[RMDB]
RNA sequence: GGGAACGACUCGAGUAGAGUCGAAAACAUGCUGAACGCCUGAAAAUGCUGAUUGCCCAGUUCGCCGCGGAUCCGGCGCUGUUGUGCGGCGAUGUCGAUAUUAUGCUGCCAGGUGAGUAUGCGCAGCUGCGUUCUCGAAAUUCGUUUCGAGAACGCAAAAAGAAACAACAACAACAAC
Reactivity to DMS in 0.01 (KOAc 150mM, MgCl2 10mM, bicine 150mM(pH8.5), 24C), signal-to-noise 2, nucleotides 027 to 126: c100a060u000g020c010u000g010a110a190c050g010c020c020u000g020a070a090a110a140u030g010c010u000g020a050u000u000g020c060c020c030a110g000u000u010c020g010c000c010g010c020g000g010a070u000c070c050g000g000c080g030c030u000g040u000u000g020u020g030c020g020g000c000g010a030u000g010u000c130g000a070u010a060u000u020a050u010g020c010u000g000c080c000a040g000g010u000g010a120g010u010a050u000g000c150g000c090a050g020c080